RNA sequence: GGGAACGACUCGAGUAGAGUCGAAAAAGUGAGGGAUAUGGAAUCGUAACGCUUGAUGACCUAGGUACAUGGUCGGAAACGACCAUCGGAAUGAGCAAGAGCGAAGAAGAUUCCUAAGUCAAUAGAACAUUUACUCCAUCUUCGGAUGGAGUAAAUGAAAAGAAACAACAACAACAAC
Reactivity to DMS in 0.01 (KOAc 150mM, MgCl2 10mM, bicine 150mM(pH8.5), 24C), signal-to-noise 5, nucleotides 027 to 126: a090g010u010g020a090g020g000g000a090u010a270u010g000g010a010a010u000c010g000u010a180a200c030g010c010u010u000g000a160u010g000a140c130c020u010a040g030g000u000a110c120a020u000g000g000u000c030g010g010a100a100a200c000g010a010c000c000a020u000c110g010g010a120a150u030g000a060g000c030a110a270g000a010g010c010g010a040a080g000a130a180g000a020u000u000c010c000u020a040a120g010u010c080a060a100u000a100g000a110a130
Reactivity to 2A3 in 0.01 (KOAc 150mM, MgCl2 10mM, bicine 150mM(pH8.5), 24C), signal-to-noise 2, nucleotides 027 to 126: a020g290u180g110a160g030g220g020a010u050a050u220g020g020a040a010u000c010g030u100a060a000c020g030c010u120u000g060a150u210g040a230c000c030u030a020g150g000u040a050c000a020u000g000g010u000c000g040g000a040a050a010c000g000a000c000c000a020u010c050g000g040a230a110u060g030a070g110c000a080a060g010a000g010c000g040a060a050g060a030a020g000a020u000u010c000c010u010a100a000g030u010c020a020a140u110a300g140a110a000